[RMDB]
RNA sequence: GGGAACGACUCGAGUAGAGUCGAAAAGGUAGGGCAUUCGUGCCCUACCACACCUCUAAGCAGAUUGGCGAGGACGACGUCGCGGCCCACGUUUUCCAACAACUACUCUCUCCUUCGGGAGAGAGAACGUUCCUAAUAAUUUCGAUUAUUAGGAACGAAAAGAAACAACAACAACAAC
Reactivity to 2A3 in 0.01 (KOAc 150mM, MgCl2 10mM, bicine 150mM(pH8.5), 24C), signal-to-noise 9, nucleotides 027 to 126: g000g010u000a000g010g000g000c020a010u040u080c180g100u040g000c000c000c000u000a000c000c000a000c000a000c000c000u020c040u060a070a060g040c040a030g040a300u120u160g070g010c030g030a060g030g030a040c040g010a010c040g030u040c020g010c030g070g050c010c000c000a030c010g010u010u000u050u060c030c010a030a020c010a030a020c070u140a090c000u030c000u000c000u000c010c010u020u070c170g080g000g000a000g000a000g000a000g000a000a000
Reactivity to DMS in 0.01 (KOAc 150mM, MgCl2 10mM, bicine 150mM(pH8.5), 24C), signal-to-noise 8, nucleotides 027 to 126: g010g020u000a010g000g000g010c000a040u000u010c190g030u000g010c000c000c000u000a000c000c010a050c160a070c020c010u000c100u010a080a140g020c060a070g000a110u000u000g010g010c030g010a120g010g010a070c050g010a050c080g000u000c060g010c050g010g010c020c020c030a210c040g010u000u000u000u000c010c020a100a080c130a050a050c110u010a160c000u000c000u000c000u000c000c000u000u020c160g010g000g000a010g000a000g000a000g000a030a080